[RMDB]
RNA sequence: GGGAACGACUCGAGUAGAGUCGAAAAGUACCUCUUUGGCGCGUAACCCCCCCCGCAGCAUGCCAACCUGACGGGGAGCUUUCCCAAAAGAGGGAAGCACCAAAGGGGUAGGGGUUCACCGAAUAGGCCUGGCAGGAGGGUUCGCCCUCCUGCCAGGAAAAGAAACAACAACAACAAC
Reactivity to 2A3 in 0.01 (KOAc 150mM, MgCl2 10mM, bicine 150mM(pH8.5), 24C), signal-to-noise 1, nucleotides 027 to 126: g060u020a000c000c000u020c000u000u000u070g130g000c130g000c030g170u090a130a130c030c000c000c000c030c000c000c000g000c000a000g000c000a000u270g050c010c010a000a060c060c000u120g010a200c000g030g000g080g000a170g040c110u000u120u070c030c090c000a160a300a050a000g120a010g100g030g000a000a010g020c000a010c000c000a010a000a000g000g010g000g000u000a020g000g020g000g010u000u080c060a160c260c000g020a000a110u070a120g150g060